[RMDB]
RNA sequence: GGGAACGACUCGAGUAGAGUCGAAAAUUGAAAUUGAACCGUCCUGUUAUCGAAAGAUAGGCAGAAGAUACGAAAUGUGUGUCAGCAUGGGAAGUAAAGGCAGACCGUGGUUCCCUUGAGUAUCUUAAUUAGGGGGACGAGUUCGCUCGUCCCCCAACAGGGUAAUAUGGUUCGCCAUAUUACCCUGAAAAGAAACAACAACAACAAC
Reactivity to DMS in 0.01 (KOAc 150mM, MgCl2 10mM, bicine 150mM(pH8.5), 24C), signal-to-noise 2, nucleotides 027 to 156: u000u030g010a030a090a110u010u000g020a090a080c030c020g010u000c010c020u000g020u000u000a070u010c070g000a220a150a210g000a060u000a040g020g020c070a080g030a080a070g010a060u010a030c080g010a060a090a080u000g010u000g010u010g030u000c050a120g000c020a080u000g010g020g000a060a130g010u000a040a040a040g000g000c020a070g020a090c020c030g000u010g060g000u000u000c000c000c020u000u010g000a170g000u000a070u010c030u000u010a050a140u010u010a180g010g020g030g070g040a040c010g040a040g000u000u000c240g010c020u000c000g010u010c000c000c000c000c000a000a010
Reactivity to 2A3 in 0.01 (KOAc 150mM, MgCl2 10mM, bicine 150mM(pH8.5), 24C), signal-to-noise 1, nucleotides 027 to 156: u040u100g010a010a010a000u080u090g060a070a030c010c040g030u060c000c000u040g010u060u030a040u070c050g040a100a030a020g010a020u030a040g080g000c040a020g010a180a000g020a010u010a020c030g050a000a070a090u100g100u000g030u010g050u040c030a040g000c050a130u050g040g000g030a040a010g040u140a170a050a000g080g000c000a000g060a050c010c030g010u010g040g090u000u020c000c010c040u000u000g030a030g000u010a020u040c010u030u030a110a090u130u160a080g000g040g010g000g000a030c050g000a000g000u090u060c120g000c020u000c000g010u010c000c010c030c000c000a000a000

The data come from the RNA Mapping Database (RMDB), library M2RFPK. Chemical mapping of a 207-nucleotide RNA with DMS and 2A3. For DMS, 4,263 sequencing reads were counted. For 2A3 the reverse transcriptase was SuperScript II with manganese. High DMS reactivity at an A or C suggests that its Watson-Crick edge is free. The reactions ran in a buffer of 150 mM KOAc, 10 mM MgCl2 and 150 mM bicine (pH 8.5), at 24 C.